[RMDB]
RNA sequence: GGGAACGACUCGAGUAGAGUCGAAAAGAUAUGGAGGUGCACAGACAUGAACUAGAUCGGAAACGAUCUAUCUGUUCAACAGCUGUGUACCUCCUAAGUCAAAAGGGCGGUCGUUCGCGACCGCCCACACAGUGCAUUCGUUCGCGAAUGCACUGUGAAAAGAAACAACAACAACAAC
Reactivity to DMS in 0.01 (KOAc 150mM, MgCl2 10mM, bicine 150mM(pH8.5), 24C), signal-to-noise 1, nucleotides 027 to 126: g000a010u000a030u000g000g010a030g000g000u000g020c000a010c000a020g000a080c160a170u020g030a020a010c000u000a000g000a000u000c000g000g000a010a010a000c000g030a000u000c000u010a020u000c280u010g000u000u000c000a060a100c260a210g000c000u000g000u000g020u000a000c000c000u000c000c000u010a000a060g000u000c000a070a070a130a130g010g010g080c000g020g010u000c000g050u000u000c240g050c040g000a000c020c000g050c000c000c000a000